[RMDB]
RNA sequence: GGGAACGACUCGAGUAGAGUCGAAAAGAUAUGGAUGUCAGUAGACAUGAUGAUAGGUCGGAAACGACCUAAUAUCAACAGCUACGACAUCCUAAGUCAAAACUUUUACGCGUUCGCGCGUAAAAGACAGAAAUCAUCUCUUCGGAGAUGAUUUCUGAAAAGAAACAACAACAACAAC
Reactivity to DMS in 0.01 (KOAc 150mM, MgCl2 10mM, bicine 150mM(pH8.5), 24C), signal-to-noise 2, nucleotides 027 to 126: g030a000u000a020u000g000g010a010u000g000u000c000a200g020u000a010g000a050c120a160u020g010a000u000g000a110u000a010g000g010u000c010g010g010a020a020a020c000g010a020c000c010u000a010a030u000a000u000c010a150a110c250a200g000c000u000a000c010g000a010c000a000u000c000c000u010a000a000g000u030c000a130a110a110a150c000u000u000u000u000a000c000g010c000g030u010u000c300g010c010g020c010g020u000a000a000a000a010g010a280
Reactivity to 2A3 in 0.01 (KOAc 150mM, MgCl2 10mM, bicine 150mM(pH8.5), 24C), signal-to-noise 2, nucleotides 027 to 126: g030a010u040a010u070g000g000a000u020g010u010c090a070g010u100a000g000a060c230a300u300g000a000u010g010a010u010a010g000g050u010c000g010g000a000a020a000c010g000a010c000c000u000a000a010u020a010u040c050a020a210c110a120g000c000u000a010c000g010a000c000a000u000c000c010u000a000a000g000u010c000a020a050a130a130c000u020u000u000u000a000c000g030c020g060u040u110c300g000c020g000c000g190u000a000a000a000a030g020a040

Conditions: 150 mM KOAc, 10 mM MgCl2 and 150 mM bicine (pH 8.5), 24 C. Chemical mapping of a 177-nucleotide RNA with DMS and 2A3. It was measured as part of the RMDB library TTRDES. For DMS the reverse transcriptase was MarathonRT. 2A3 adducts were read by reverse transcription with SuperScript II with manganese.